[RMDB]
RNA sequence: GGGAACGACUCGAGUAGAGUCGAAAACAGGAGAGUAUGCACCUUGGGACCAUAUACACUCGUUACGCCUCCUUUUCACCAAAGGAGGGUUGUUUGGUUAAUCUCCUGAAUGAUGUCACUGGUGCGGGGACGCUCCUACUUUCGAGUAGGAGCGUCCAAAAGAAACAACAACAACAAC
Reactivity to DMS in 0.01 (KOAc 150mM, MgCl2 10mM, bicine 150mM(pH8.5), 24C), signal-to-noise 1, nucleotides 027 to 126: c010a000g000g000a070g020a040g000u030a060u020g000c020a000c000c060u120u010g000g030g010a000c040c070a030u000a060u070a030c030a100c010u000c080g000u020u010a150c220g020c000c000u000c000c000u020u020u000u020c300a170c300c220a050a000a000g000g000a000g020g000g000u010u000g000u000u000u120g000g000u020u000a060a090u000c000u030c000c000u000g060a150a060u010g000a230u070g000u000c070a120c110u000g000g030u000g000c000g150g050
Reactivity to 2A3 in 0.01 (KOAc 150mM, MgCl2 10mM, bicine 150mM(pH8.5), 24C), signal-to-noise 2, nucleotides 027 to 126: c000a000g000g080a050g020a000g040u130a020u210g000c030a000c000c050u100u050g070g000g000a020c020c010a010u030a020u030a230c090a080c020u180c080g180u150u180a030c100g160c020c000u060c000c050u000u000u020u090c220a110c050c000a000a000a000g000g030a000g000g020g000u010u140g000u000u010u080g010g000u020u020a100a090u020c000u020c000c000u000g040a040a000u130g020a000u250g030u120c020a020c090u120g010g000u030g000c080g080g020